[RMDB]
RNA sequence: GGGAACGACUCGAGUAGAGUCGAAAAGACCACAUGGUCAAGGCUGGUUUAGUCGGUGUGCUCACACUAGACAACCAGGACCUUAAUGGCAAGUGGUAUGAUUUUGGUGACUUCGUAAUCACUCAACGUAGGGUAAGCUUCGGCUUACCCAAAAGAAACAACAACAACAAC
Reactivity to DMS in 0.01 (KOAc 150mM, MgCl2 10mM, bicine 150mM(pH8.5), 24C), signal-to-noise 3, nucleotides 027 to 129: g020a070c000c000a070c020a080u030g000g040u040c020a000a000g000g000c000u000g000g000u010u040u020a100g020u020c020g010g000u010g010u010g000c260u060c220a060c010a020c010u030a090g020a020c020a010a000c020c000a000g000g000a060c030c020u000u000a070a170u030g000g030c000a000a000g030u010g000g000u040a030u030g000a110u020u050u050u040g030g000u020g010a030c050u010u010c200g030u000a080a090u010c040a000c000u040c130a080a110c160g070u050a040
Reactivity to 2A3 in 0.01 (KOAc 150mM, MgCl2 10mM, bicine 150mM(pH8.5), 24C), signal-to-noise 7, nucleotides 027 to 129: g050a010c000c020a010c020a070u250g030g000u010c010a000a000g010g000c000u000g000g000u030u040u100a030g000u010c020g000g000u020g000u030g050c080u160c090a010c000a010c010u050a130g000a000c010a000a000c000c000a000g020g010a060c000c000u050u080a150a080u120g000g000c020a010a030g000u020g030g030u050a070u080g150a110u020u100u110u120g030g010u020g010a020c010u060u000c140g050u080a060a050u030c030a010c020u150c060a050a140c100g070u110a080
Record summary: Chemical mapping of a 170-nucleotide RNA with DMS and 2A3. For 2A3, 15,378 sequencing reads were counted. Reactivities are given for positions 27 through 129. For DMS the reverse transcriptase was MarathonRT.